[RMDB]
RNA sequence: GGGAACGACUCGAGUAGAGUCGAAAACCGCUCUUCGGAGCGGAAGAGACCGUAGGACCGAUAAGCAUUCUUGCAACAGCCUAGUUUCGAAAGAGACUAGGACAUGCAAUUUAUGCUUUUGACGGUCCUAAACGGCGCCAUCUUGAUUCGUCAAGAAAACAAUUGUUUGGUUCGCCAAACAAUUGUUAAAAGAAACAACAACAACAAC
Reactivity to 2A3 in 0.01 (KOAc 150mM, MgCl2 10mM, bicine 150mM(pH8.5), 24C), signal-to-noise 4, nucleotides 027 to 156: c000c000g020c010u000c000u030u080c280g140g020a010g010c020g020g010a070a000g040a010g020a050c000c020g000u020a020g000g000a000c000c010g030a080u020a080a000g000c000a010u000u030c010u010u010g000c030a080a070c040a210g010c000c000u000a000g000u010u000u000c030g050a100a100a040g000a010g000a000c010u000a010g000g020a010c000a030u010g000c000a000a000u090u030u040a010u010g000c000u020u000u020u100g130a070c000g000g000u010c000c000u000a000a010a000c010g000g010c020g000c020c020a060u020c010u020u010g010a040u030u120c160g070u040c130a020a010g010a010a130
Reactivity to DMS in 0.01 (KOAc 150mM, MgCl2 10mM, bicine 150mM(pH8.5), 24C), signal-to-noise 2, nucleotides 027 to 156: c020c000g000c000u000c010u010u020c300g070g010a060g050c010g000g000a010a010g000a110g000a130c000c010g050u000a050g000g020a000c000c000g050a160u000a040a010g010c000a010u000u000c290u000u000g010c030a050a100c110a240g020c000c000u000a000g000u010u000u000c010g000a190a190a300g020a060g010a020c000u000a020g000g000a010c030a130u000g000c020a030a020u010u000u010a010u000g030c000u000u000u000u000g020a190c100g010g020u000c010c000u000a000a010a070c000g030g000c000g000c040c040a100u020c010u000u010g020a100u000u000c160g020u000c010a020a040g000a100a140
Annotation: This 207-nucleotide RNA was probed chemically with 2A3 and DMS. Reactivities are given for positions 27 through 156. Conditions: 150 mM KOAc, 10 mM MgCl2 and 150 mM bicine (pH 8.5), 24 C. 2A3 adducts were read by reverse transcription with SuperScript II with manganese. DMS adducts were read by reverse transcription with MarathonRT.